Record summary:
Structure probing data (DMS and 2A3) for a 177-nucleotide construct. Values cover nucleotides 27 to 126. Source: RMDB library M2PK50, as collected in RNAgym. The 2A3 profile rests on 3,153 reads. The reactions ran in a buffer of 150 mM KOAc, 10 mM MgCl2 and 150 mM bicine (pH 8.5), at 24 C. For DMS the reverse transcriptase was MarathonRT. 2A3 adducts were read by reverse transcription with SuperScript II with manganese.

RNA sequence: GGGAACGACUCGAGUAGAGUCGAAAACUGCUCUCGUUCGCGAGAGCAGAAAUAAUAAACGCUAGAAAACGAUCAAAACUAGCGAAAUACAUAACCAUCGAAAAAGAAGUCACUUCGGUGACUUCAACCCAUAUUCAUGGUUCGCCAUGAAUAUGGGAAAAGAAACAACAACAACAAC
Reactivity to DMS in 0.01 (KOAc 150mM, MgCl2 10mM, bicine 150mM(pH8.5), 24C), signal-to-noise 2, nucleotides 027 to 126: c010u000g000c000u000c000u000c000g020u000u040c220g010c000g000a000g000a020g000c000a000g020a010a050a040u000a110a050u000a100a150a190c020g000c000u000a010g030a100a110a120a160c140g010a120u010c140a100a060a070a070c010u000a030g010c000g040a040a060a050u020a110c160a100u000a080a160c030c000a090u040c110g000a080a050a080a160a050g000a020a000g010u000c000a000c000u000u040c190g050g000u000g010a000c000u000u000c000a040a070
Reactivity to 2A3 in 0.01 (KOAc 150mM, MgCl2 10mM, bicine 150mM(pH8.5), 24C), signal-to-noise 3, nucleotides 027 to 126: c000u010g010c010u010c010u000c000g020u060u040c090g020c010g080a000g000a000g020c000a000g000a000a000a000u010a000a010u050a020a090a010c000g000c000u020a010g080a080a160a040a030c130g100a170u200c110a060a050a010a150c000u000a000g010c020g000a140a010a000u100a010c040a010u140a020a100c000c030a040u130c110g080a050a060a000a110a100g010a010a000g000u030c000a000c000u020u090c210g100g000u000g010a000c000u000u000c000a000a000